[RMDB]
RNA sequence: GGGAACGACUCGAGUAGAGUCGAAAAGAUAUGGACUCCCAUUUAUCAUAUGGCAUAGACAUGAACCACGAUCGGAAACGAUCGGAGUUCAACAGCUAUGCCAUAUGAUAAAUGGAGUCCUAAGUCAGUGGUAAAGAUAGUUCGCUAUCUUUACCACAAAAGAAACAACAACAACAAC
Reactivity to DMS in 0.01 (KOAc 150mM, MgCl2 10mM, bicine 150mM(pH8.5), 24C), signal-to-noise 3, nucleotides 027 to 126: g010a050u010a300u010g000g010a030c020u000c180c050c050a000u000u000u000a010u000c000a010u000a000u000g010g010c000a000u000a000g000a040c100a260u000g000a010a010c000c270a280c000g000a000u000c000g000g000a110a100a300c020g000a000u000c000g010g000a300g000u010u000c010a010a080c300a120g000c000u000a000u000g000c010c000a000u000a000u000g000a000u000a010a000a000u000g000g000a020g010u000c000c000u000a000a030g010u000c040a120
Source: RMDB library TTRINS, as collected in RNAgym. The record gives the reactivity of an RNA of 177 nucleotides to DMS. The reactions ran in a buffer of 150 mM KOAc, 10 mM MgCl2 and 150 mM bicine (pH 8.5), at 24 C.